[RMDB]
RNA sequence: GGGAACGACUCGAGUAGAGUCGAAAAAUGAGAUCCCAUCUUGCACACUGUGCUAAUUUGAGAUUCUCAUGCCUCCUACUUGGAGAGAUCUGGACUAGAAGUCAGGGCCUCUGACUCUGCCAGCCACAAAACGUACAAGGCUUCGGCCUUGUACGAAGUCCUCCUAACACUUCGGUGUUAGGAGGACAAAAGAAACAACAACAACAAC
Reactivity to 2A3 in 0.01 (KOAc 150mM, MgCl2 10mM, bicine 150mM(pH8.5), 24C), signal-to-noise 1, nucleotides 027 to 156: a000u000g000a000g010a010u000c010c010c010a010u020c000u040u020g000c000a070c070a080c230u300g000u000g030c100u160a050a120u000u010u030g010a010g010a010u300u120c030u010c040a040u050g060c000c000u000c010c010u010a140c080u120u240g010g020a010g010a010g010a080u000c000u000g010g010a100c050u100a080g030a250a040g160u010c000a020g000g130g300c070c030u230c000u120g000a000c000u010c000u020g030c000c000a000g020c050c000a050c010a040a160a050a060c010g010u000a000c000a000a020g010g010c000u040u050c080g030g010c000c000u020u020g000u010a000c020g000a000a000